Chemical mapping of a 170-nucleotide RNA with DMS and 2A3. In probing experiments dimethyl sulfate is read out at A N1 and C N3, which are open when not base-paired. For DMS, 17,894 sequencing reads were counted. The reactions ran in a buffer of 150 mM KOAc, 10 mM MgCl2 and 150 mM bicine (pH 8.5), at 24 C.

[RMDB]
RNA sequence: GGGAACGACUCGAGUAGAGUCGAAAAGGGACGAAGCCGCCCCCGGGCGCUCCCCUCGAUCCACCUUCGAGGGGGUUCACACCCCCAGUCGGCGGGCCGGCUACUCUUCUUUUCCUUUCCUCGUCCUAGACUCAGUCGUUCGCGACUGAGAAAAGAAACAACAACAACAAC
Reactivity to DMS in 0.01 (KOAc 150mM, MgCl2 10mM, bicine 150mM(pH8.5), 24C), signal-to-noise 6, nucleotides 027 to 129: g000g000g000a030c070g040a110a060g050c040c010g010c000c000c000c000c000g000g000g000c150g020c180u060c020c010c000c050u010c000g010a040u020c050c130a080c160c110u030u030c000g000a020g020g040g000g020g020u020u010c060a150c160a300c030c030c030c020c000a160g030u010c060g000g000c210g080g030g030c080c050g000g000c010u000a110c200u030c060u000u090c000u020u010u000u030c040c060u020u060u020c010c010u020c030g030u110c040c040u040a000g020a170
Reactivity to 2A3 in 0.01 (KOAc 150mM, MgCl2 10mM, bicine 150mM(pH8.5), 24C), signal-to-noise 4, nucleotides 027 to 129: g000g000g010a010c020g050a110a010g010c010c000g000c010c010c000c000c020g000g010g040c080g030c030u130c000c000c000c000u000c000g030a030u080c040c080a110c080c070u000u000c000g000a010g000g010g010g000g000u090u070c010a040c010a030c030c000c000c000c000a020g080u050c010g010g030c110g060g000g000c120c040g010g000c010u030a050c020u010c000u210u160c040u020u040u020u060c000c000u020u040u010c000c010u030c010g030u040c000c010u030a070g020a080